[RMDB]
RNA sequence: GGGAACGACUCGAGUAGAGUCGAAAACAACAGCGGCACGUCGCCGGCUCCGACCGCGAGUAUCGUGCCGACCCCGGCGAUCAGGGCUAGCCGGCCGGUGUUGGCGCCAACCAGCACCCACCGCCGACAACAAUAAACACUUCGGUGUUUAUUGUUGAAAAGAAACAACAACAACAAC
Reactivity to 2A3 in 0.01 (KOAc 150mM, MgCl2 10mM, bicine 150mM(pH8.5), 24C), signal-to-noise 9, nucleotides 027 to 126: c040a010a020c020a020g060c010g000g000c000a000c030g040u040c020g040c150c080g030g000c030u150c100c120g270a300c010c010g010c020g020a020g050u140a070u240c020g010u030g000c000c000g010a030c000c000c010c000g010g010c020g010a050u100c070a140g050g030g000c040u050a030g070c030c010g010g000c020c020g000g000u010g010u010u040g050g000c090g080c040c000a060a120c000c000a000g000c000a020c000c000c000a050c020c040g030c010c000g040a040
Reactivity to DMS in 0.01 (KOAc 150mM, MgCl2 10mM, bicine 150mM(pH8.5), 24C), signal-to-noise 6, nucleotides 027 to 126: c080a100a120c180a110g010c040g000g010c000a040c020g010u010c060g010c090c050g030g010c020u040c140c140g000a120c040c040g000c050g000a090g020u040a060u020c040g020u010g000c020c000g000a040c050c050c010c020g000g000c030g000a060u030c080a130g000g000g000c050u010a100g010c070c050g000g010c050c110g000g010u010g010u010u010g000g010c050g000c120c160a100a190c040c020a040g010c000a090c010c010c090a090c090c050g000c010c020g020a280
Description: Chemical mapping of a 177-nucleotide RNA with 2A3 and DMS. The data come from the RNA Mapping Database (RMDB), library OK1LIB. Conditions: 150 mM KOAc, 10 mM MgCl2 and 150 mM bicine (pH 8.5), 24 C.